[RMDB]
Source information
Structure probing data (DMS and 2A3) for a 177-nucleotide construct.
RNA sequence: GGGAACGACUCGAGUAGAGUCGAAAACCCCGAUCCGAAAGGCCCGACGCCCAAGUUUGGAGAGCACUCCGGCCGAAGGGUUGAGAACACCAGAGGGAGGAAGCCACGCAGAGAAGCGGAGAAACCACAGGUAGUAAUAGUUCGCUAUUACUACCUGAAAAGAAACAACAACAACAAC
Reactivity to DMS in 0.01 (KOAc 150mM, MgCl2 10mM, bicine 150mM(pH8.5), 24C), signal-to-noise 5, nucleotides 027 to 126: c040c000c010c060g000a070u010c020c030g010a060a140a170g000g010c010c010c080g010a180c190g010c030c010c020a100a150g010u010u000u000g030g020a080g020a130g010c100a080c070u000c030c100g020g000c040c020g000a140a160g000g000g010u000u000g000a100g010a070a090c090a060c060c040a030g010a110g010g010g000a070g000g000a080a050g020c030c030a080c070g000c050a050g010a080g000a080a050g000c060g000g010a100g000a090a070a110c080c090a180
Reactivity to 2A3 in 0.01 (KOAc 150mM, MgCl2 10mM, bicine 150mM(pH8.5), 24C), signal-to-noise 2, nucleotides 027 to 126: c000c000c010c020g020a040u020c000c020g070a180a030a060g020g000c000c070c010g020a030c030g040c010c010c010a060a040g030u090u150u180g080g000a090g000a020g080c020a040c080u010c020c020g020g010c010c010g010a060a030g020g010g000u010u040g020a040g030a070a020c040a030c080c020a030g010a080g050g000g000a010g000g020a030a010g010c000c030a040c030g020c030a020g040a000g000a190a000g030c050g040g050a030g020a070a080a000c040c010a040
The DMS profile rests on 3,940 reads. 2A3 adducts were read by reverse transcription with SuperScript II with manganese. The RNA was probed in 150 mM KOAc, 10 mM MgCl2 and 150 mM bicine (pH 8.5) at 24 C.